[RMDB]
RNA sequence: GGGAACGACUCGAGUAGAGUCGAAAAGAUAUGGACGUGACAUGGGAGCUGAGUCGGAAACGACCAGCGACGAUCAUGCACGUCCUAAGUCAAAAGUUGAGAUAGACGUUCGCGUCUAUCUCAACAACAUCUUAUGAUGGUUCGCCAUCAUAAGAUGAAAAGAAACAACAACAACAAC
Reactivity to 2A3 in 0.01 (KOAc 150mM, MgCl2 10mM, bicine 150mM(pH8.5), 24C), signal-to-noise 6, nucleotides 027 to 126: g030a010u070a040u150g000g000a000c000g000u010g030a190c000a000u010g020g010g010a020g010c000u020g020a050g130u010c010g010g030a070a080a040c010g000a000c000c010a000g010c010g010a040c010g010a010u030c000a000u010g000c000a000c000g000u000c000c000u000a010a010g010u000c010a020a020a040a130g000u000u000g000a000g000a000u010a010g010a010c010g010u050u060c300g030c010g100u000c000u000a000u010c000u000c000a000a000c000a000a000
Reactivity to DMS in 0.01 (KOAc 150mM, MgCl2 10mM, bicine 150mM(pH8.5), 24C), signal-to-noise 9, nucleotides 027 to 126: g000a040u000a300u010g000g000a020c010g010u000g000a170c000a010u000g000g000g000a090g010c000u000g000a140g020u000c000g010g000a090a070a180c010g010a010c000c000a010g000c000g000a030c190g010a050u010c000a010u000g000c000a010c000g010u000c000c000u000a000a060g010u000c040a100a070a110a110g010u000u000g000a010g010a020u000a000g010a010c000g010u000u010c220g020c010g010u000c000u000a000u000c000u000c000a000a000c000a110a160
An RNA of 177 nucleotides, treated with 2A3 and DMS and read out base by base. As a SHAPE reagent, 2A3 marks flexible, mostly unpaired nucleotides at the ribose 2'-OH. Values cover nucleotides 27 to 126. For 2A3 the reverse transcriptase was SuperScript II with manganese. It was measured as part of the RMDB library TTRDEL. Conditions: 150 mM KOAc, 10 mM MgCl2 and 150 mM bicine (pH 8.5), 24 C. For 2A3, 67,270 sequencing reads were counted.